[RMDB]
RNA sequence: GGGAACGACUCGAGUAGAGUCGAAAAGAUUUCGAUCUGUCGAUCGGCUCGACGGUCGCGUUCGCGGGCGUGCUGUGCGCGAUGGUGCUCAACGCGACCGACAACACGUUCGUCGCGAUCGCGGCGAAGUUUUAAUGGAUUUCGAUCCAUUAAAACUAAAAGAAACAACAACAACAAC
Reactivity to 2A3 in 0.01 (KOAc 150mM, MgCl2 10mM, bicine 150mM(pH8.5), 24C), signal-to-noise 9, nucleotides 027 to 126: g090a040u090u110u110c070g020a040u010c030u080g130u120c070g020a030u010c030g060g000c050u030c040g090a090c040g030g000u010c000g000c000g010u030u040c050g000c020g030g040g010c020g010u050g000c070u130g060u120g060c020g000c020g050a070u120g090g120u200g050c070u070c130a020a030c020g000c000g050a070c030c000g010a010c000a010a000c020a000c020g050u100u100c030g080u080c010g010c010g090a170u110c090g000c010g010g000c020g020a020
Reactivity to DMS in 0.01 (KOAc 150mM, MgCl2 10mM, bicine 150mM(pH8.5), 24C), signal-to-noise 9, nucleotides 027 to 126: g010a130u000u000u010c070g010a040u000c010u010g010u000c050g010a050u000c060g010g010c100u000c020g010a090c070g010g010u000c010g020c010g010u010u000c180g020c020g000g010g010c010g010u000g010c040u000g010u010g010c020g010c010g010a100u010g010g020u010g010c140u010c080a040a060c010g010c000g010a070c050c030g000a020c050a020a030c060a050c080g010u000u000c030g020u000c010g010c010g000a060u000c080g010c010g010g000c030g000a030